[RMDB]
An RNA of 207 nucleotides, treated with DMS and 2A3 and read out base by base. DMS adducts were read by reverse transcription with MarathonRT. In probing experiments dimethyl sulfate is read out at A N1 and C N3, which are open when not base-paired.
RNA sequence: GGGAACGACUCGAGUAGAGUCGAAAAUGUGGUUCGCCGCACGUCGUUCGUUCGCGGACGAGCAGGUGCCAUAACCUCCAAAUGGUACCUGCGCGUGUUGUCAGCAAGGUCUAAGCUGAUAACACUAUGCUAACGACUGAAGCAUAUUGGAUUACGGGAUACAAUCAUUGUUCGCAAUGAUUGUAUCAAAAGAAACAACAACAACAAC
Reactivity to DMS in 0.01 (KOAc 150mM, MgCl2 10mM, bicine 150mM(pH8.5), 24C), signal-to-noise 4, nucleotides 027 to 156: u000g020u000g020g020u000u000c070g040c030c040g020c010a080c050g020u000c040g010u000u000c020g010u010u010c190g010c050g010g010a140c020g000a060g000c000a010g010g020u000g000c000c010a020u000a050a080c080c050u000c210c040a090a210a020u000g000g020u000a010c000c000u000g000c030g020c030g010u000g010u000u010g010u000c000a010g010c010a090a140g020g010u000c140u000a130a270g000c010u000g000a030u000a000a000c010a010c020u000a030u000g010c020u000a070a060c030g010a050c040u010g010a030a080g020c020a130u000a060u000u010g010g010a200u000u010a110c100g000g000
Reactivity to 2A3 in 0.01 (KOAc 150mM, MgCl2 10mM, bicine 150mM(pH8.5), 24C), signal-to-noise 9, nucleotides 027 to 156: u110g020u030g020g050u060u070c120g040c050c010g040c020a030c050g110u070c020g020u100u020c010g000u020u020c050g010c020g030g020a040c040g000a020g000c010a000g000g000u000g010c000c000a020u030a110a130c020c030u020c030c020a040a060a010u010g000g000u010a000c000c000u000g000c010g000c030g000u000g000u000u000g000u000c000a010g000c020a090a110g140g040u090c110u220a140a040g010c000u000g000a000u000a000a000c000a000c010u010a010u060g000c000u010a010a010c010g020a010c040u090g050a050a020g040c050a050u060a120u140u100g040g010a060u080u160a120c120g070g030